[RMDB]
RNA sequence: GGGAACGACUCGAGUAGAGUCGAAAAGAUAUGGAUGUUGAGUUAUUGUCAGCGAAAGUUACGCAGUCCUCGGAAACGAGGACUGCGUAACUGUUCGCUUGGAUUUAUAAUGUAAGCAUCCUAAGUCCGUCUAAUAGGAGUUCGCUCCUAUUAGACGAAAAGAAACAACAACAACAAC
Reactivity to DMS in 0.01 (KOAc 150mM, MgCl2 10mM, bicine 150mM(pH8.5), 24C), signal-to-noise 1, nucleotides 027 to 126: g010a090u020a300u000g000g000a010u000g000u010u000g010a300g030u010u000a000u020u000g020u000c010a020g000c010g030a010a050a070g020u010u020a020c000g070c010a050g030u000c000c030u000c110g040g000a120a060a300c000g030a050g030g030a010c060u020g010c010g030u000a010a000c000u000g000u000u000c000g010c000u000u020g040g000a020u000u020u000a020u010a000a000u020g000u010a300a150g010c000a020u000c010c010u000a090a120g030u010c070